[RMDB]
RNA sequence: GGGAACGACUCGAGUAGAGUCGAAAAGAACGCCACUUCGGUGGCGUUCGAAGAUCUACCACACGUAGUUCACUAUCGUGUGAGACAUCGAUAGAUGUCAAAUGGUCCGGAAGUUCGCUUCCGGAAAUGUCAUAUAAGAGUUCGCUCUUAUAUGACAAAAAGAAACAACAACAACAAC
Reactivity to DMS in 0.01 (KOAc 150mM, MgCl2 10mM, bicine 150mM(pH8.5), 24C), signal-to-noise 9, nucleotides 027 to 126: g000a010a010c000g020c000c000a010c000u000u010c190g040g020u000g000g010c000g010u000u000c000g000a100a100g000a120u000c040u010a140c160c010a010c000a010c000g020u000a040g000u010u010c240a100c020u000a020u010c030g020u000g010u000g000a280g010a010c000a000u000c000g010a180u010a110g010a010u000g010u000c010a070a060a080u000g010g000u000c000c000g000g010a020a010g010u000u010c200g000c000u000u000c000c000g000g000a000a020a040
Reactivity to 2A3 in 0.01 (KOAc 150mM, MgCl2 10mM, bicine 150mM(pH8.5), 24C), signal-to-noise 7, nucleotides 027 to 126: g000a000a000c010g000c010c000a000c020u030u070c200g130g000u000g000g010c000g000u000u000c000g000a000a000g020a030u020c030u080a140c050c010a000c000a000c000g010u020a010g050u190u190c100a090c240u040a040u270c020g000u000g000u000g020a070g000a010c000a000u010c000g050a040u120a240g000a000u000g000u010c010a030a040a100u180g100g030u010c000c010g000g010a010a000g010u040u140c170g030c130u010u000c000c010g010g000a000a000a010